[RMDB]
RNA sequence: GGGAACGACUCGAGUAGAGUCGAAAAGAAGGGCGUGGCCUCAGGCCGGGCUGAGCAGGUACAGAGGGGACAGCGCAGCAGCAGCACCAGGACGGGGUGGGUCAGCAGAGAGAGAGCAGAGGUGGCCGUUUAGAGCUUGAUUCGUCAAGCUCUAAACAAAAGAAACAACAACAACAAC
Reactivity to 2A3 in 0.01 (KOAc 150mM, MgCl2 10mM, bicine 150mM(pH8.5), 24C), signal-to-noise 1, nucleotides 027 to 126: g050a040a070g030g020g020c120g100u100g040g030c030c030u080c050a060g080g000c000c010g020g040g000c000u040g000a020g050c020a030g000g060u100a110c030a070g060a080g070g000g040g020a010c040a070g020c050g020c040a050g040c020a030g030c000a020g000c000a020c070c030a030g030g030a010c050g010g020g000g060u140g010g000g010u060c030a030g010c030a010g050a000g010a000g000a000g000a000g050c040a020g010a010g020g000u020g000g020c030c000
Reactivity to DMS in 0.01 (KOAc 150mM, MgCl2 10mM, bicine 150mM(pH8.5), 24C), signal-to-noise 2, nucleotides 027 to 126: g000a090a130g000g000g010c090g020u000g010g010c040c020u010c140a080g020g010c000c020g010g010g050c050u000g000a050g010c070a080g000g010u010a070c070a100g010a130g010g010g010g000a100c100a040g000c090g000c040a060g020c080a080g000c110a070g000c050a050c040c060a080g030g020a120c110g020g000g000g020u010g010g000g000u020c070a090g010c090a050g000a100g010a090g010a110g010a100g000c030a050g010a090g000g020u000g010g010c090c150